Chemical mapping of a 307-nucleotide RNA with DMS and 2A3. The RNA was probed in 150 mM KOAc, 10 mM MgCl2 and 150 mM bicine (pH 8.5) at 24 C. For 2A3 the reverse transcriptase was SuperScript II with manganese. DMS adducts were read by reverse transcription with MarathonRT. For DMS, 9,051 sequencing reads were counted. It was measured as part of the RMDB library POS240.
RNA sequence: GGGAACGACUCGAGUAGAGUCGAAAAGAAAGAAACAUGCUCAAAGUGCGUAUACUUGUGCAAGCACUUGUGCAAGCACUUGUGCAGACACUUGUGCAAGCACUUGUGCAGAUACCAAUGUAGACACUUGUGCAAGCACUUGUGCAGACACUUGUGCAAGCACUUGUGCAGAUACCAAUGUAGACACUUGUGCAGACACUUGUGCAAGCACUUGUGCAGACACUAAUGAAGACACUUGUGCAAGCACAGAAUACACCGAUAAAAAGAGUCACGAGUUCGCUCGUGACAAAAGAAACAACAACAACAAC
Reactivity to DMS in 0.01 (KOAc 150mM, MgCl2 10mM, bicine 150mM(pH8.5), 24C), signal-to-noise 4, nucleotides 027 to 266: g000a140a130a090g010a210a100a100c100a090u000g000c010u010c020a040a020a040g010u000g020c200g020u010a120u010a010c060u010u010g010u020g020c090a150a220g010c000a010c000u000u000g020u000g010c000a090a300g020c010a010c000u000u000g010u000g010c080a180g010a240c020a000c020u000u010g010u010g010c030a090a300g000c000a010c010u000u000g000u010g020c160a090g010a190u010a050c150c290a100a090u020g000u000a060g000a180c000a010c020u010u000g010u000g010c000a060a300g000c010a010c000u020u010g000u000g010c120a150g000a200c020a010c020u000u000g000u010g010c010a060a300g000c000a000c000u010u000g000u000g000c040a020g010a090u020a030c150c060a060a030u010g020u000a040g000a140c020a010c000u000u000g000u000g010c020a040g000a140c200a040c060u000u010g000u000g020c010a040a300g000c010a000c000u000u000g010u000g000c120a140g000a150c140a080c170u020a080a130u030g030a210a100g000a220c020a010c010u020u030g010u000g000c020a040a300g000c000a000c010a050g030a120a060u000a050c090a180c060c070g000a100u040a080a120a120a090a130g000a200
Reactivity to 2A3 in 0.01 (KOAc 150mM, MgCl2 10mM, bicine 150mM(pH8.5), 24C), signal-to-noise 3, nucleotides 027 to 266: g020a020a080a000g060a010a140a000c040a060u050g000c010u020c090a110a100a050g010u010g010c070g060u130a020u020a150c030u040u040g040u050g090c080a070a050g000c000a000c000u020u010g010u000g000c010a030a050g000c000a010c000u000u000g000u010g000c020a010g120a120c000a010c010u000u010g000u000g010c020a070a050g010c000a000c020u010u000g010u000g000c030a020g040a130u080a080c070c070a080a120u240g020u050a070g020a130c000a000c010u010u010g000u000g000c010a040a040g000c000a010c010u010u010g000u000g000c000a020g130a110c010a000c000u010u000g000u000g010c010a040a050g000c000a000c000u000u000g000u000g000c000a010g020a080u150a050c010c040a020a050u190g000u050a030g040a050c000a000c000u000u000g000u010g000c030a010g030a050c030a000c100u090u060g000u000g000c010a040a060g000c000a000c000u020u020g020u020g000c060a030g090a070c030a020c130u280a260a190u250g130a100a030g080a040c000a000c010u010u030g010u000g010c000a070a010g000c000a000c000a020g010a000a030u080a020c030a050c060c060g090a030u300a100a140a100a030a020g170a050